[RMDB]
RNA sequence: GGGAACGACUCGAGUAGAGUCGAAAAGCUAGGAAUGUUUAGCGAUACAUUUUACCAAAAAUCGCUGCGAUUCCAAGAAUUCAUAUUUAUUUUGAAACGCUACUGGGAUGUCUGCAAUGAAAUGGGAGCUCGCUAACUGGUUCGCCAGUUAGCGAGCAAAAGAAACAACAACAACAAC
Reactivity to 2A3 in 0.01 (KOAc 150mM, MgCl2 10mM, bicine 150mM(pH8.5), 24C), signal-to-noise 1, nucleotides 027 to 126: g050c050u040a000g000g120a030a000u000g000u010u110u190a070g000c000g000a000u000a000c020a070u050u040u040u230a130c090c000a020a000a000a000a000u000c050g020c000u010g000c000g000a070u100u000c000c050a000a060g010a100a090u040u070c120a000u030a150u070u070u260a070u050u270u120u050g000a000a050a000c040g000c020u060a040c000u050g010g000g010a020u000g020u000c000u010g010c000a030a260u070g130a000a000a230u000g090g000g000a000
Source information: Structure probing data (2A3) for a 177-nucleotide construct. The data come from the RNA Mapping Database (RMDB), library RFM100. 2A3 adducts were read by reverse transcription with SuperScript II with manganese. The reactions ran in a buffer of 150 mM KOAc, 10 mM MgCl2 and 150 mM bicine (pH 8.5), at 24 C. The 2A3 profile rests on 333 reads. 2A3 is a SHAPE reagent: it acylates the 2'-hydroxyl of flexible nucleotides of all four kinds.